[RMDB]
RNA sequence: GGGAACGACUCGAGUAGAGUCGAAAAGUGCGACAUUUCGAUGUCGCACAAACCCAAAUGGUGGCACCUAACUAAACAAGCCGGGAAAAGCCAGAUGCCAUCGUCCUUAGCCCUUCGGGGCUAAGAAGCAAAUUUAGUAAUUCGUUACUAAAUUUGCAAAAGAAACAACAACAACAAC
Reactivity to DMS in 0.01 (KOAc 150mM, MgCl2 10mM, bicine 150mM(pH8.5), 24C), signal-to-noise 5, nucleotides 027 to 126: g000u000g010c000g010a020c000a010u000u000u010c140g010a010u000g020u010c000g020c010a000c010a020a090a100c010c000c010a090a110a060u010g010g030u000g000g010c010a010c010c000u010a060a080c070u010a060a100a160c090a080a110g020c070c050g000g000g000a070a100a100a060g010c040c080a030g010a040u000g010c000c000a010u000c020g000u010c130c010u000u000a010g000c000c000c000u000u010c150g020g000g010g010c000u000a000a000g000a090a120
Reactivity to 2A3 in 0.01 (KOAc 150mM, MgCl2 10mM, bicine 150mM(pH8.5), 24C), signal-to-noise 6, nucleotides 027 to 126: g000u000g000c000g000a010c010a010u040u060u110c220g110a010u010g000u000c000g020c000a000c000a000a000a000c000c010c000a020a070a020u170g000g000u000g010g000c010a030c030c020u070a100a090c030u100a140a090a100c060a140a040g090c100c050g050g030g010a080a160a010a000g040c050c040a020g020a030u030g000c000c000a010u010c010g050u060c010c000u000u010a000g000c010c000c000u020u060c240g030g000g000g000c000u000a000a000g010a010a000